[RMDB]
RNA sequence: GGGAACGACUCGAGUAGAGUCGAAAAUUCAUUUGCAAAUGGCUAGACGCUAAGGACAAAAGCGAUAGCUAGCCUGUAAACACCCGUUAAAUCUAAUUAGAUACGUCAAAAAAUCCCAAGAGAACGGCAUGUGUAAUGUGUUCGCACAUUACACAUGAAAAGAAACAACAACAACAAC
Reactivity to 2A3 in 0.01 (KOAc 150mM, MgCl2 10mM, bicine 150mM(pH8.5), 24C), signal-to-noise 2, nucleotides 027 to 126: u030u010c020a000u030u020u110g000c020a000a150a150u140g000g000c000u000a000g020a040c010g010c000u040a060a120g220g060a180c050a070a120a080a010g000c010g050a080u010a040g040c000u000a000g000c000c020u010g020u040a030a010a010c030a040c060c000c000g010u000u090a100a190a010u020c030u050a070a160u110u020a070g020a010u050a070c050g000u000c030a000a000a000a000a000a250u040c000c030c000a000a030g060a000g010a070a030c030g050g000
Reactivity to DMS in 0.01 (KOAc 150mM, MgCl2 10mM, bicine 150mM(pH8.5), 24C), signal-to-noise 3, nucleotides 027 to 126: u000u020c130a130u000u010u020g010c040a050a140a070u000g000g000c000u000a030g010a180c010g030c000u000a100a130g020g030a140c290a120a090a110a030g000c000g010a200u000a120g000c010u000a000g000c040c000u000g010u000a020a090a080c170a100c080c010c020g000u000u000a040a060a030u000c000u000a130a140u020u040a140g010a030u000a020c100g010u000c050a000a020a090a080a050a040u000c010c000c000a050a120g020a100g020a040a040c040g000g000
Structure probing data (2A3 and DMS) for a 177-nucleotide construct. 2A3 is a SHAPE reagent: it acylates the 2'-hydroxyl of flexible nucleotides of all four kinds. For DMS, 1,826 sequencing reads were counted.